This 177-nucleotide RNA was probed chemically with 2A3.
The RNA was probed in 150 mM KOAc, 10 mM MgCl2 and 150 mM bicine (pH 8.5) at 24 C.
High 2A3 reactivity points to a flexible backbone, as in loops and unpaired stretches.
The 2A3 profile rests on 560 reads.
Values cover nucleotides 27 to 126.
2A3 adducts were read by reverse transcription with SuperScript II with manganese.

RNA sequence: GGGAACGACUCGAGUAGAGUCGAAAACGGUGAUAUCAUGGGCGUCGUUCACGACCAGAACUGAGACACAACAAAGCAGCUCUGAAUUUUCAACGUAUUCAAACCCCGGCUCCACCCAUUUGCUGGGGCACGCACUCAGGUUCGCCUGAGUGCGUGCAAAAGAAACAACAACAACAAC
Reactivity to 2A3 in 0.01 (KOAc 150mM, MgCl2 10mM, bicine 150mM(pH8.5), 24C), signal-to-noise 2, nucleotides 027 to 126: c010g000g090u040g050a030u110a040u190c000a150u170g070g030g030c020g010u020c020g040u070u060c030a000c210g070a040c110c000a000g020a010a000c020u140g010a090g020a120c050a030c040a090a280c030a090a180a000g030c040a000g000c020u000c000u010g090a210a150u220u020u080u110c010a010a010c020g130u030a190u040u100c050a020a080a120c000c000c000c000g040g000c000u030c020c020a220c000c000c000a010u110u090u110g040c010u000g000g000g020